[RMDB]
RNA sequence: GGGAACGACUCGAGUAGAGUCGAAAAGAUAUGGAACUUUAGGACAUGCUGAGAGUCGGAAACGAUGGUAGCAACAGCCUAUGGUUCCUAAGUCAAACCGACCGCUCACUUCGGUGAGCGGUCGGAACGUAGCAACAAUCUUCGGAUUGUUGCUACGAAAAGAAACAACAACAACAAC
Reactivity to 2A3 in 0.01 (KOAc 150mM, MgCl2 10mM, bicine 150mM(pH8.5), 24C), signal-to-noise 1, nucleotides 027 to 126: g010a010u040a000u090g020g010a000a010c000u030u000u000a000g040g030a060c070a300u300g030c000u040g030a090g010a070g300u030c020g010g040a000a000a000c010g030a030u160g050g250u300a030g010c090a100a220c100a300g030c030c000u060a010u020g020g000u000u000c000c000u010a010a010g020u040c030a070a090a070c000c000g010a000c010c020g140c030u070c000a000c010u000u140c300g200g000u040g000a030g000c030g000g000u020c000g000g000a000a000
Reactivity to DMS in 0.01 (KOAc 150mM, MgCl2 10mM, bicine 150mM(pH8.5), 24C), signal-to-noise 1, nucleotides 027 to 126: g000a000u000a120u020g000g000a020a000c000u000u000u000a030g020g030a070c070a120u020g020c000u020g000a220g020a200g020u000c000g020g000a030a010a070c000g010a000u000g000g020u000a000g020c020a040a070c210a150g020c000c010u000a000u000g000g010u000u000c000c010u000a000a060g030u000c010a100a110a120c000c000g000a030c000c000g020c000u010c000a010c000u000u020c230g030g010u000g000a000g040c000g000g000u000c000g040g000a000a000